[RMDB]
Structure probing data (2A3 and DMS) for a 177-nucleotide construct. DMS adducts were read by reverse transcription with MarathonRT.
RNA sequence: GGGAACGACUCGAGUAGAGUCGAAAAGAUAUGGAGCGAACUACAGAGAAUUUGGACGUUGAAAUCGGAAACGAUGGAGUCCUCAGGAUCUGCGCUCCUAAGUCAAACACUACGUUCGCGUAGUGAACAGUACGGUAUAGUUCGCUAUACCGUACUGAAAAGAAACAACAACAACAAC
Reactivity to 2A3 in 0.01 (KOAc 150mM, MgCl2 10mM, bicine 150mM(pH8.5), 24C), signal-to-noise 6, nucleotides 027 to 126: g020a020u060a040u180g000g000a000g010c010g010a080a070c090u180a050c300a010g020a000g000a040a020u040u060u070g010g010a010c020g120u300u060g030a050a060a010u010c010g000g020a060a030a050c010g000a010u010g010g030a030g010u000c000c000u000c000a020g010g020a030u000c000u020g010c000g000c000u000c000c000u010a090a010g010u000c030a070a070a060c010a000c010u000a010c000g040u040u070c300g000c010g150u010a000g000u010g000a040a020
Reactivity to DMS in 0.01 (KOAc 150mM, MgCl2 10mM, bicine 150mM(pH8.5), 24C), signal-to-noise 8, nucleotides 027 to 126: g000a050u010a300u010g010g000a010g020c000g000a080a060c100u020a300c020a020g000a010g010a300a270u000u000u000g010g000a020c010g010u010u000g000a080a100a020u000c000g000g000a110a100a170c010g000a010u000g000g010a090g010u000c000c000u000c040a010g000g010a300u000c000u000g000c020g000c010u000c000c010u000a020a060g000u000c040a130a080a230c010a020c000u000a010c000g000u000u010c260g040c010g010u000a010g010u000g010a060a170

Conditions: 150 mM KOAc, 10 mM MgCl2 and 150 mM bicine (pH 8.5), 24 C.
Reactivities are given for positions 27 through 126.